[RMDB]
RNA sequence: GGGAACGACUCGAGUAGAGUCGAAAAGAUAUGGACGAGCUCAUGCGGGAGAAUGAGGGUCGGAAACGACCCGAAUUCGAAGAACGCAUGAGGCUCGUCCUAAGUCAAAGGACCGUUCGCGGUCCAACAUAAUAUCCUGGUUCGCCAGGAUAUUAUGAAAAGAAACAACAACAACAAC
Reactivity to DMS in 0.01 (KOAc 150mM, MgCl2 10mM, bicine 150mM(pH8.5), 24C), signal-to-noise 7, nucleotides 027 to 126: g000a050u000a300u000g000g010a010c000g010a010g010c000u000c000a000u000g010c000g000g000g010a090g020a020a010u000g000a300g000g010g040u000c000g010g000a080a120a250c010g010a010c000c000c000g000a110a010u000u000c020g000a080a160g000a140a200c010g000c010a000u000g000a030g010g010c010u000c000g010u000c000c000u000a010a080g010u000c050a040a120a190g010g000a010c010c000g020u000u000c220g020c020g010g010u000c000c000a070a100
Reactivity to 2A3 in 0.01 (KOAc 150mM, MgCl2 10mM, bicine 150mM(pH8.5), 24C), signal-to-noise 3, nucleotides 027 to 126: g030a020u090a060u180g020g000a000c000g010a010g000c000u010c020a000u010g010c010g030g000g010a040g010a010a010u020g000a050g010g000g000u000c020g030g020a110a100a050c010g000a000c000c010c000g000a000a000u000u000c000g010a040a010g010a010a000c010g000c000a000u000g010a000g010g000c010u000c000g000u010c000c000u000a000a000g000u010c010a050a030a140g020g000a010c030c010g010u060u060c300g000c010g100g000u000c000c010a000a000